[RMDB]
This 177-nucleotide RNA was probed chemically with 2A3 and DMS.
DMS adducts were read by reverse transcription with MarathonRT.
Reactivities are given for positions 27 through 126.
2A3 is a SHAPE reagent: it acylates the 2'-hydroxyl of flexible nucleotides of all four kinds.
For 2A3, 2,114 sequencing reads were counted.
Conditions: 150 mM KOAc, 10 mM MgCl2 and 150 mM bicine (pH 8.5), 24 C.
RNA sequence: GGGAACGACUCGAGUAGAGUCGAAAACGCAGGUGUCGGAGGGAUCGCCAGCCCUCAGGAUAGUGAGCUCCCGCAGAGGGAUAAGCUAUCUCCCUGCGAAACCUCUGGGAAGUUCGCUUCCCAGAGGGAAUUUGAAUCACUUCGGUGAUUCAAAUUCAAAAGAAACAACAACAACAAC
Reactivity to 2A3 in 0.01 (KOAc 150mM, MgCl2 10mM, bicine 150mM(pH8.5), 24C), signal-to-noise 2, nucleotides 027 to 126: c010g000c010a000g050g000u120g140u300c140g110g020a000g030g020g010a060u260c100g100c110c000a040g010c010c000c000u010c000a000g000g020a000u020a000g030u050g030a040g100c030u000c000c020c010g010c090a140g080a090g290g000g010a000u000a010a020g000c000u000a000u000c000u020c000c010c000u000g000c000g000a010a010a000c000c000u000c000u000g000g000g000a040a000g020u030u090c160g040c100u020u030c020c000c010a000g000a000g000g000
Reactivity to DMS in 0.01 (KOAc 150mM, MgCl2 10mM, bicine 150mM(pH8.5), 24C), signal-to-noise 2, nucleotides 027 to 126: c060g000c010a040g000g030u010g020u000c140g020g010a010g000g000g000a050u000c120g020c090c090a190g010c000c000c000u000c010a170g000g000a020u000a020g020u000g010a160g020c300u000c000c010c000g010c280a120g000a300g020g000g010a020u000a030a270g000c000u010a030u000c000u000c060c000c000u000g010c000g000a060a070a260c000c000u000c000u000g010g010g000a030a000g000u010u020c260g000c010u000u000c000c000c000a010g000a000g010g000